RNA sequence: GGGAACGACUCGAGUAGAGUCGAAAACUUGUACCGCAGUGCUCUCUUGGCCAUUUUCAGUAUUCAUUCGUGCCCUUGCUACUUGCAGUGACGACUCUGAUACAGUUAUGGGUUUACCAGCGGCAGACCCGUAAUAGUGGUUCGCCACUAUUACGGGAAAAGAAACAACAACAACAAC
Reactivity to DMS in 0.01 (KOAc 150mM, MgCl2 10mM, bicine 150mM(pH8.5), 24C), signal-to-noise 3, nucleotides 027 to 126: c060u010u010g020u000a090c040c030g020c110a060g000u010g010c030u010c020u010c050u040u000g010g020c020c040a080u010u000u020u010c050a080g000u010a050u010u010c040a070u000u000c060g020u010g000c060c040c010u000u010g020c010u000a060c090u000u010g030c010a060g030u010g030a110c090g000a040c050u000c060u000g000a090u000a050c180a070g000u010u000a090u010g010g020g000u010u030u010a090c030c020a050g030c040g020g010c040a060g000a150
Reactivity to 2A3 in 0.01 (KOAc 150mM, MgCl2 10mM, bicine 150mM(pH8.5), 24C), signal-to-noise 8, nucleotides 027 to 126: c020u040u090g060u070a060c010c010g020c050a030g030u030g060c010u010c000u000c020u080u100g070g000c020c030a110u060u040u020u090c040a040g030u040a130u040u090c060a050u050u020c040g050u110g080c020c010c000u060u100g020c010u040a160c040u040u140g000c020a020g000u010g060a030c030g010a020c000u000c010u060g020a030u030a120c030a010g010u020u030a070u140g030g000g020u020u030u050a080c010c010a020g010c020g030g020c010a020g030a070
Structure probing data (DMS and 2A3) for a 177-nucleotide construct. It was measured as part of the RMDB library OK1LIB. For DMS, 7,263 sequencing reads were counted.